Chemical mapping of a 177-nucleotide RNA with DMS. Source: RMDB library OK2TST, as collected in RNAgym. DMS adducts were read by reverse transcription with MarathonRT. Conditions: 150 mM KOAc, 10 mM MgCl2 and 150 mM bicine (pH 8.5), 24 C. The DMS profile rests on 851 reads.
RNA sequence: GGGAACGACUCGAGUAGAGUCGAAAAAAAAAGAAACAAGGCUGCUGCAUGAGUUGGAUUUGUGCUACUACAAUUAUUGCAUUAAGGGUGAUGAGAAACCAAAGAUGGACAGAUCUCCGCAACACGAAUUCCUAUAGCGGUUCGCCGCUAUAGGAAUAAAAGAAACAACAACAACAAC
Reactivity to DMS in 0.01 (KOAc 150mM, MgCl2 10mM, bicine 150mM(pH8.5), 24C), signal-to-noise 1, nucleotides 027 to 126: a010a030a020a010a020g010a160a000a050c080a010a060g010g020c060u000g010c160u000g010c050a030u000g010a070g000u000u000g000g050a090u020u000u010g030u030g000c040u020a120c130u000a040c120a050a080u010u020a060u010u000g000c050a050u010u000a080a110g010g010g010u000g010a100u000g010a120g010a110a100a050c060c030a030a050a100g020a060u000g000g000a100c090a060g010a030u000c040u010c060c030g030c030a050a020c080a040c130g000a060